[RMDB]
RNA sequence: GGGAACGACUCGAGUAGAGUCGAAAACAGGAACUAGAGUUUCUGCUAGGCAGUCCCAUCUGACAACUCUAGGAUACGGUAGAGUGUGUACCCGAAUUGUCUCAGCAGAGGACUGCAGGAGCUCAGAGUCUGCUCAAUAGUUCGCUAUUGAGCAGACAAAAGAAACAACAACAACAAC
Reactivity to 2A3 in 0.01 (KOAc 150mM, MgCl2 10mM, bicine 150mM(pH8.5), 24C), signal-to-noise 3, nucleotides 027 to 126: c010a030g090g090a070a020c030u110a130g010a030g090u000u110u060c010u040g040c080u140a110g170g040c020a000g000u000c000c000c000a040u030c010u000g020a010c010a020a010c010u030c020u080a090g040g000a060u030a070c030g120g080u160a060g070a060g230u180g020u040g000u040a140c000c000c010g010a010a050u040u030g030u010c040u020c090a080g000c030a030g110a170g080g010a010c010u000g000c010a010g020g020a010g020c010u020c030a010g020a010
Reactivity to DMS in 0.01 (KOAc 150mM, MgCl2 10mM, bicine 150mM(pH8.5), 24C), signal-to-noise 2, nucleotides 027 to 126: c040a140g000g000a050a090c030u000a130g000a150g000u000u000u000c010u000g010c140u000a120g020g000c010a050g000u000c010c000c030a130u010c050u000g000a020c000a040a030c040u000c020u010a080g000g000a090u000a010c010g020g000u010a130g010a190g000u020g010u000g000u000a030c030c000c120g000a020a080u000u000g010u000c050u010c090a060g020c130a200g010a130g000g000a010c000u000g030c020a150g000g000a040g010c030u000c050a080g000a170

The record gives the reactivity of an RNA of 177 nucleotides to 2A3 and DMS. For 2A3 the reverse transcriptase was SuperScript II with manganese. For DMS, 1,424 sequencing reads were counted. The 2A3 profile rests on 3,093 reads. As a SHAPE reagent, 2A3 marks flexible, mostly unpaired nucleotides at the ribose 2'-OH.